[RMDB]
RNA sequence: GGGAACGACUCGAGUAGAGUCGAAAACAGCUGGAAGUUUCAUUAAAUUUUGCAGAAUAUUUAACUACUUGCUUCAGUAUAGCCUCAGUGCUAUCCCUUGUGGAGAUGAGUAAAAAACACAGACAGGUAGUUAGAACUAUUACAUAGUCAUAUUAACACAUACCGCUUAUUUCGAUAAGCGGUAUGUAAAAGAAACAACAACAACAAC
Reactivity to DMS in 0.01 (KOAc 150mM, MgCl2 10mM, bicine 150mM(pH8.5), 24C), signal-to-noise 1, nucleotides 027 to 156: c030a070g050c020u020g040g030a150a190g000u000u000u000c020a200u000u020a050a100a180u000u000u000u000g020c000a150g020a140a110u000a090u000u000u000a010a030c000u000a000c000u000u010g000c010u000u000c090a170g050u000a050u000a090g020c050c050u000c080a070g000u020g030c030u000a050u000c020c060c040u010u000g010u010g030g010a150g000a130u000g000a160g000u010a010a030a030a140a110a030c060a020c010a130g020a050c000a020g010g020u000a030g020u000u000a050g040a090a050c090u010a110u010u000a040c020a210u000a050g020u000c110a110u020a090u000u000a100a080c090
Reactivity to 2A3 in 0.01 (KOAc 150mM, MgCl2 10mM, bicine 150mM(pH8.5), 24C), signal-to-noise 1, nucleotides 027 to 156: c010a010g100c020u120g130g080a080a040g060u120u000u000c040a020u000u260a130a040a220u220u280u200u260g000c020a000g100a100a000u080a040u120u080u000a000a000c000u000a000c000u010u000g030c010u080u010c050a040g000u060a060u000a030g000c000c030u100c110a020g090u030g210c020u060a040u030c000c000c030u040u070g100u220g060g030a100g030a200u110g060a000g010u110a010a000a000a000a140a000c050a030c010a050g060a020c000a000g000g010u000a000g000u000u000a000g000a010a010c050u020a000u130u110a060c040a100u100a050g060u120c020a010u130a100u130u140a180a010c020